RNA sequence: GGGAACGACUCGAGUAGAGUCGAAAAGAUAUGGACUGUCAGAGGGAGCUCAGUAUUCGGAAACGAAUACGAGCGAGGAUCUCUGCAGUCCUAAGUCAAAAGCUGAGGUUUGUUCGCAAACCUCAGCGCAUGCACAUUACUUCGGUAAUGUGCAUGCAAAAGAAACAACAACAACAAC
Reactivity to 2A3 in 0.01 (KOAc 150mM, MgCl2 10mM, bicine 150mM(pH8.5), 24C), signal-to-noise 3, nucleotides 027 to 126: g010a000u020a010u090g000g010a010c010u030g070u300c090a010g000a010g040g070g060a190g010c010u010c050a110g020u000a010u000u010c010g010g000a030a020a000c000g000a010a000u010a000c010g000a010g010c010g020a080g030g070a130u010c000u010c000u000g000c010a000g000u000c000c000u000a000a000g020u010c010a010a030a120a120g000c010u010g010a000g030g000u000u030u020g090u040u220c300g000c200a000a000a000c000c000u000c000a000g010c010
Reactivity to DMS in 0.01 (KOAc 150mM, MgCl2 10mM, bicine 150mM(pH8.5), 24C), signal-to-noise 3, nucleotides 027 to 126: g010a010u000a190u010g000g000a000c000u010g010u020c020a000g010a020g000g010g010a140g030c000u000c010a140g030u010a010u000u000c000g010g000a030a020a090c000g010a020a010u000a010c010g000a010g020c000g010a100g020g000a120u000c000u000c010u000g000c000a010g010u000c000c000u000a000a060g010u000c010a130a090a140a260g010c000u000g010a010g000g010u000u000u000g020u000u010c250g010c010a010a000a010c000c000u000c000a000g010c000
Notes
An RNA of 177 nucleotides, treated with 2A3 and DMS and read out base by base. Conditions: 150 mM KOAc, 10 mM MgCl2 and 150 mM bicine (pH 8.5), 24 C. For DMS the reverse transcriptase was MarathonRT.